[RMDB]
An RNA of 177 nucleotides, treated with DMS and 2A3 and read out base by base.
For DMS the reverse transcriptase was MarathonRT.
For DMS, 2,343 sequencing reads were counted.
Values are in units of 0.01, from 0 to 300, in steps of 10.
RNA sequence: GGGAACGACUCGAGUAGAGUCGAAAAAUAAUGAGAUCAAACCUUCAGGUCUAAAAACCAUGGUUGUGUCUGCGGGUCAAGAGCAAACUAACUGUAAUACUAGUUCCUUAGCUUAUUACGAACCUGUGAUUACUAAGAAGUUCGCUUCUUAGUAAUCAAAAGAAACAACAACAACAAC
Reactivity to DMS in 0.01 (KOAc 150mM, MgCl2 10mM, bicine 150mM(pH8.5), 24C), signal-to-noise 3, nucleotides 027 to 126: a090u010a080a050u000g010a060g000a090u000c070a100a090a110c050c020u000u000c210a090g020g000u000c020u020a090a070a090a140a080c050c040a080u000g030g010u000u010g010u000g020u000c020u000g000c070g010g020g010u000c050a070a060g020a070g000c030a040a060a050c070u000a030a080c110u000g020u010a040a050u000a100c090u000a040g010u020u000c080c040u000u000a080g010c050u000u000a020u000u010a060c080g020a110a110c080c040u000g010u010
Reactivity to 2A3 in 0.01 (KOAc 150mM, MgCl2 10mM, bicine 150mM(pH8.5), 24C), signal-to-noise 4, nucleotides 027 to 126: a000u150a000a040u100g050a000g000a040u040c040a040a040a100c000c020u130u110c120a060g030g010u020c070u130a080a050a000a000a010c020c000a040u090g050g000u030u070g020u040g020u030c010u020g010c020g020g010g000u030c030a050a020g020a010g040c000a040a030a040c010u040a030a030c020u060g030u100a050a050u020a130c060u030a020g040u040u060c020c010u020u040a020g000c020u060u020a040u060u050a070c070g020a040a050c010c010u030g030u040